Background
Chemical mapping of a 207-nucleotide RNA with 2A3 and DMS. Conditions: 150 mM KOAc, 10 mM MgCl2 and 150 mM bicine (pH 8.5), 24 C. For DMS the reverse transcriptase was MarathonRT. For 2A3 the reverse transcriptase was SuperScript II with manganese. The DMS profile rests on 5,763 reads. For 2A3, 2,916 sequencing reads were counted. In probing experiments dimethyl sulfate is read out at A N1 and C N3, which are open when not base-paired. Source: RMDB library OK3TST, as collected in RNAgym.
RNA sequence: GGGAACGACUCGAGUAGAGUCGAAAAUCUGGGCAGGAGUGGUACCGGCAGCAGGCGUCCAGGGCUGUGAACCAGGCCAUCGGGCGAGUGAUCCGGCACCGCCAGGACUACGGAGCUGUCUUCCUCUGUGACCACAGGUGCGUGCAGUCCGGUGGCAAUCCUAAAUCGAUUUCGAUCGAUUUAGGAUAAAAGAAACAACAACAACAAC
Reactivity to 2A3 in 0.01 (KOAc 150mM, MgCl2 10mM, bicine 150mM(pH8.5), 24C), signal-to-noise 3, nucleotides 027 to 156: u050c010u030g000g030g000c040a050g020g090a060g040u060g050g030u060a070c020c050g040g000c020a030g010c020a010g070g030c020g040u030c010c030a030g000g030g000c030u030g020u040g100a030a070c050c030a040g070g040c010c000a010u030c030g000g020g000c020g030a080g050u110g030a090u050c050c050g030g000c000a000c000c000g000c000c010a010g010g010a020c060u070a010c050g000g000a020g010c070u070g180u170c020u130u070c010c000u000c020u030g030u020g060a070c010c000a040c030a130g020g010u030g010c100g010u030g000c030a010g020u000c000c010g000g010u000g000g000c010a000
Reactivity to DMS in 0.01 (KOAc 150mM, MgCl2 10mM, bicine 150mM(pH8.5), 24C), signal-to-noise 2, nucleotides 027 to 156: u000c050u020g000g010g040c020a130g000g010a130g030u000g010g000u000a050c040c050g000g010c050a140g010c080a070g040g000c040g050u010c030c040a080g030g010g030c000u010g030u000g010a010a130c050c040a150g000g040c000c010a030u000c010g010g030g020c010g000a100g040u000g000a090u010c050c010g030g010c020a050c010c020g030c030c020a100g030g020a120c010u000a080c010g000g010a070g020c060u000g020u010c150u000u010c060c010u000c020u010g010u000g020a080c020c030a170c040a130g020g030u000g010c080g020u000g040c050a150g000u020c010c000g030g010u000g020g010c020a100